[RMDB]
RNA sequence: GGGAACGACUCGAGUAGAGUCGAAAAGAUAUGGAGGUACCGGAGCAUCGAUCUACUGGUUCGGAAACGAACUGUAGGGAGCUCGUACCUCCUAAGUCAAACUACGCUAACUUCGGUUAGCGUAGAAGUCUAAUCAGGAGUUCGCUCCUGAUUAGACAAAAGAAACAACAACAACAAC
Reactivity to 2A3 in 0.01 (KOAc 150mM, MgCl2 10mM, bicine 150mM(pH8.5), 24C), signal-to-noise 4, nucleotides 027 to 126: g010a000u020a000u070g000g020a010g030g010u080a040c180c300g300g040a010g040c010a040u300c030g000a010u000c010u000a010c020u080g000g020u000u000c000g000g000a010a000a000c000g000a000a010c000u000g000u010a000g010g000g000a010g000c000u000c020g000u000a000c000c000u010c000c000u010a000a000g000u000c010a010a020a030c000u010a000c010g000c000u000a010a000c000u040u040c120g180g000u010u000a000g000c000g000u000a000g000a020a010
Reactivity to DMS in 0.01 (KOAc 150mM, MgCl2 10mM, bicine 150mM(pH8.5), 24C), signal-to-noise 5, nucleotides 027 to 126: g000a010u000a020u010g020g010a030g010g010u000a010c300c300g010g000a010g030c010a300u010c170g010a010u000c000u000a000c010u010g000g010u000u000c000g000g010a010a020a020c010g010a010a010c010u000g000u000a020g000g010g000a010g000c010u000c040g010u000a010c000c010u000c000c000u000a000a050g000u000c010a140a130a300c010u000a010c000g010c000u000a000a000c000u000u020c270g010g010u000u000a010g000c010g010u010a000g010a050a090
Notes:
An RNA of 177 nucleotides, treated with 2A3 and DMS and read out base by base. The reactions ran in a buffer of 150 mM KOAc, 10 mM MgCl2 and 150 mM bicine (pH 8.5), at 24 C. Reactivities are given for positions 27 through 126. The data come from the RNA Mapping Database (RMDB), library TTRDES. For DMS the reverse transcriptase was MarathonRT.